[RMDB]
RNA sequence: GGGAACGACUCGAGUAGAGUCGAAAACCCCGACACAAACGGCUCGGGUACCGGUGAAUGCCCAUCAACGUUCCAUUGAGGAAAACUGUGUAAUAUUUAAGAAACUCGUUGGGGCUGAUACAAUCGACGCUAUGAGACUUUUCGAAGUCUCAUAGCGAAAAGAAACAACAACAACAAC
Reactivity to 2A3 in 0.01 (KOAc 150mM, MgCl2 10mM, bicine 150mM(pH8.5), 24C), signal-to-noise 3, nucleotides 027 to 126: c040c000c000c000g080a020c030a010c060a030a300a000c060g070g010c040u050c000g000g000g120u050a120c000c000g040g050u060g100a040a060u090g040c050c000c010a080u110c090a040a090c010g000u090u100c000c010a020u070u120g050a090g000g150a010a110a050a100c060u040g040u010g000u170a110a090u100a300u050u080u100a120a030g080a060a080a020c020u010c020g020u010u000g090g000g020g000c030u030g020a010u020a190c100a050a090u180c060g130a030
Reactivity to DMS in 0.01 (KOAc 150mM, MgCl2 10mM, bicine 150mM(pH8.5), 24C), signal-to-noise 2, nucleotides 027 to 126: c050c000c010c060g030a050c100a060c130a000a100a100c090g000g020c040u000c070g000g020g000u040a030c070c030g000g040u000g010a060a050u000g000c030c000c010a090u020c040a050a160c060g000u000u010c000c030a110u020u120g010a140g040g000a060a120a220a090c140u000g000u010g020u060a160a190u040a040u030u050u000a110a000g000a040a120a060c070u000c010g030u000u000g050g000g000g070c030u000g000a140u010a000c100a010a150u020c090g000a140
Structure probing data (2A3 and DMS) for a 177-nucleotide construct.
For DMS, 1,766 sequencing reads were counted.
The reactions ran in a buffer of 150 mM KOAc, 10 mM MgCl2 and 150 mM bicine (pH 8.5), at 24 C.
It was measured as part of the RMDB library OK1LIB.